Source information: The record gives the reactivity of an RNA of 207 nucleotides to 2A3. It was measured as part of the RMDB library RNAMAK. The RNA was probed in 150 mM KOAc, 10 mM MgCl2 and 150 mM bicine (pH 8.5) at 24 C.
[RMDB]
RNA sequence: GGGAACGACUCGAGUAGAGUCGAAAAAGACCUUUCGAGGUCUAAAAAAACCUUUGUGCAUCGAAAUUAUCGGAGGAGGAGCGUCCCAUUGGGACGCUCUCCCCACCCUCCAAUAAUUUCUGAUGCACUCUGGUAAAAACUGAGUUUCGACUCAGAAACCAUUUAACUCAUUCGUGAGUUAAAUGGUAAAAGAAACAACAACAACAAC
Reactivity to 2A3 in 0.01 (KOAc 150mM, MgCl2 10mM, bicine 150mM(pH8.5), 24C), signal-to-noise 2, nucleotides 027 to 156: a000g010a010c010c000u040u040u120c220g120a030g000g000u010c000u040a080a010a000a000a000a010a050c030c000u050u020u000g000u020g010c000a000u000c000g010a000a010a000u010u020a000u010c010g010g000a000g020g000a000g000g000a000g000c010g050u020c090c000c050a160u250u300g000g000g000a000c000g000c010u010c030u060c040c000c000c000a020c010c000c000u000c000c000a000a010u000a000a000u000u020u000c070u100g000a000u000g020c000a000c000u000c010u000g000g010u050a110a130a000a000a020c010u030g010a010g010u040u180u240c160g160a070c000u000c010a000g020a120a020